The data come from the RNA Mapping Database (RMDB), library OK2TST. An RNA of 177 nucleotides, treated with 2A3 and DMS and read out base by base. High 2A3 reactivity points to a flexible backbone, as in loops and unpaired stretches. Values are in units of 0.01, from 0 to 300, in steps of 10. Reactivities are given for positions 27 through 126. For DMS, 1,842 sequencing reads were counted.
[RMDB]
RNA sequence: GGGAACGACUCGAGUAGAGUCGAAAAAGGGCGGCUGGACGCUGGUCAGCUGGGACGGGAUACCCGUCGGGCCGGCGUCGCUGCCGACCGCGUUAUUCGUCGACGUGCGCGAGCUGAUCACGGCGCCGGCAGGACUAAGGUUCGCCUUAGUCCUGCCAAAAGAAACAACAACAACAAC
Reactivity to 2A3 in 0.01 (KOAc 150mM, MgCl2 10mM, bicine 150mM(pH8.5), 24C), signal-to-noise 1, nucleotides 027 to 126: a020g040g010g020c010g020g000c020u030g040g000a000c010g000c000u000g030g010u010c010a040g010c110u230g140g000g070a000c020g040g000g030a070u210a300c020c000c000g000u010c000g010g000g000c000c000g000g000c000g000u000c000g000c000u010g000c010c000g000a020c000c010g020c000g010u040u050a190u120u120c050g020u020c020g050a020c030g010u080g050c000g000c030g020a030g000c050u090g070a100u060c040a050c120g040g000c040g000c010c010
Reactivity to DMS in 0.01 (KOAc 150mM, MgCl2 10mM, bicine 150mM(pH8.5), 24C), signal-to-noise 2, nucleotides 027 to 126: a060g000g000g010c000g010g000c000u010g010g000a030c020g000c000u000g020g020u000c010a110g020c200u000g000g050g020a020c030g010g010g010a250u020a150c060c000c010g030u000c010g000g010g010c000c010g000g000c000g010u000c010g010c020u020g000c030c000g000a000c020c000g010c090g000u000u000a110u000u010c050g030u010c040g010a030c010g010u010g010c030g030c110g000a080g010c090u000g020a120u000c060a090c030g000g000c050g010c110c040